[RMDB]
RNA sequence: GGGAACGACUCGAGUAGAGUCGAAAAGGAUAUGGAUCGCACAUCGCUUAAUUCGACAAUGGUGGUCGAUUUCACAGGGGCGACCGAACGGACCCGAAACGUCAGCAGUGACGGAUCGGUCACCUACCCAUGGGCAUAGCUUCGGCUAUGCCCAUGGAAAAGAAACAACAACAACAAC
Reactivity to 2A3 in 0.01 (KOAc 150mM, MgCl2 10mM, bicine 150mM(pH8.5), 24C), signal-to-noise 1, nucleotides 027 to 126: g060g010a010u040a000u300g030g050a040u050c050g000c010a030c020a110u030c000g020c120u070u100a040a010u260u040c000g020a010c090a160a190u180g120g060u030g080g060u180c030g010a050u050u060u090c050a010c060a030g000g050g040g080c050g090a070c010c040g020a100a050c110g000g050a060c040c050c030g000a070a070a000c030g000u020c000a010g000c010a090g100u010g050a010c000g060g010a020u020c000g000g040u000c010a020c040c010u020a010c010
Reactivity to DMS in 0.01 (KOAc 150mM, MgCl2 10mM, bicine 150mM(pH8.5), 24C), signal-to-noise 1, nucleotides 027 to 126: g010g020a090u000a030u010g010g000a130u000c040g030c000a050c060a050u000c020g000c040u010u020a030a100u000u000c060g010a050c090a080a150u000g000g000u000g000g010u000c000g000a040u010u000u000c110a130c080a160g020g000g000g010c050g030a010c040c010g020a030a060c230g000g000a120c060c000c000g030a020a060a230c010g020u000c010a010g050c300a140g000u010g000a020c020g010g000a110u000c000g000g000u000c040a070c070c020u000a180c080